[RMDB]
RNA sequence: GGGAACGACUCGAGUAGAGUCGAAAAGACGCGAGAGACGCGAGACGCGCAAUGGGAGAAGCCGCAAUAGAUGAUACGAAGGAAGAGGCAAGACGGAGAGCGCGCAACCAUCUCUAAUAACCAAGAACCUAAUCGCCUCAUUCGUGAGGCGAUUAGGAAAAGAAACAACAACAACAAC
Reactivity to DMS in 0.01 (KOAc 150mM, MgCl2 10mM, bicine 150mM(pH8.5), 24C), signal-to-noise 1, nucleotides 027 to 126: g000a070c170g000c040g000a110g010a000g030a100c300g010c050g000a270g000a050c090g040c090g010c000a140a140u000g000g000g000a170g000a180a090g000c010c020g000c070a170a080u020a050g050a020u010g000a140u170a040c290g000a070a050g000g050a120a120g000a120g000g020c230a060a070g050a160c110g000g010a000g000a000g000c080g000c000g030c010a000a120c070c000a010u000c100u000c010u000a070a010u000a030a020c000c100a050a140g000a050a060
Reactivity to 2A3 in 0.01 (KOAc 150mM, MgCl2 10mM, bicine 150mM(pH8.5), 24C), signal-to-noise 2, nucleotides 027 to 126: g150a000c000g000c000g010a080g020a000g050a070c050g090c060g000a010g110a150c120g020c000g040c000a050a100u180g020g000g000a150g030a030a000g000c040c000g000c020a080a080u080a140g090a040u190g030a070u170a080c040g080a210a090g040g000a000a110g080a000g040g000c010a000a010g000a000c000g000g000a000g010a000g020c000g000c000g000c070a020a010c000c000a060u030c000u000c050u220a050a110u110a140a060c050c060a010a000g000a130a080